[RMDB]
RNA sequence: GGGAACGACUCGAGUAGAGUCGAAAACAAUCUCAUAUGAAGUAACACUAGCAAUCAUCCUACUAUCAGUACUCCUAAUAAAUGGAUCAUAUACUCUAUCAACCCUAAUCACAACACAAGAGCACAUUUGAAUAAUCUUUACAUCCUGACCCCUAGCCAGAUGAAUCGACUUCGGUCGAUUCAUCUGAAAAGAAACAACAACAACAAC
Reactivity to 2A3 in 0.01 (KOAc 150mM, MgCl2 10mM, bicine 150mM(pH8.5), 24C), signal-to-noise 2, nucleotides 027 to 156: c030a000a090u010c030u050c040a080u100a090u240g050a110a070g060u120a050a010c020a040c210u060a030g060c060a040a040u040c040a070u030c060c020u050a120c080u060a080u190c060a010g020u040a060c030u020c010c000u030a050a040u060a130a110a030u150g000g000a030u000c030a010u140a000u010a150c010u070c010u040a040u100c030a050a240c000c010c010u010a100a010u060c080a030c050a160a130c040a040c000a000a110g000a000g050c020a040c010a100u030u020u100g040a100a040u080a060a020u030c040u020u090u060a010c010a060u020c000c000u080g020a100c010c000c000c000u010a000g000c020
Source: RMDB library PDB130, as collected in RNAgym. The record gives the reactivity of an RNA of 207 nucleotides to 2A3. Conditions: 150 mM KOAc, 10 mM MgCl2 and 150 mM bicine (pH 8.5), 24 C. Values are in units of 0.01, from 0 to 300, in steps of 10. 2A3 adducts were read by reverse transcription with SuperScript II with manganese.